[RMDB]
RNA sequence: GGGAACGACUCGAGUAGAGUCGAAAAUUAUUGGCCGAUCAGACCUGUUCCGUCUGCUGUAGUUUUUGACGCAUUCUUGAUCUAUUGGUAACUCAUGAACCCCAUCGUAAUAAAUAGGCUACAGCGGUUCAAAUGUGAGUUUCGACUCACAUUUGAAAAAAGAAACAACAACAACAAC
Reactivity to 2A3 in 0.01 (KOAc 150mM, MgCl2 10mM, bicine 150mM(pH8.5), 24C), signal-to-noise 5, nucleotides 027 to 126: u130u070a080u080u130g040g000c010c010g030a030u060c020a010g040a070c000c040u040g040u050u020c010c010g050u000c040u060g000c010u020g010u030a030g010u000u020u020u060u200g070a060c030g030c060a070u110u070c030u040u080g060a090u010c010u030a080u070u020g040g010u080a070a030c010u030c070a100u100g060a080a090c010c000c000c010a030u100c020g020u030a020a020u060a100a070a090u130a020g010g000c010u010a030c000a010g000c020g010g020
Reactivity to DMS in 0.01 (KOAc 150mM, MgCl2 10mM, bicine 150mM(pH8.5), 24C), signal-to-noise 5, nucleotides 027 to 126: u030u020a070u030u010g010g020c010c020g000a050u000c060a090g030a070c050c040u000g010u000u010c050c040g020u010c010u010g010c000u010g000u010a010g010u000u010u030u000u010g020a090c090g010c160a100u010u010c020u000u000g000a050u000c040u010a130u000u000g010g010u010a070a100c130u010c030a030u010g000a040a110c060c010c010c050a090u030c100g020u010a080a050u030a040a080a090u010a080g010g010c010u000a000c020a030g010c020g010g000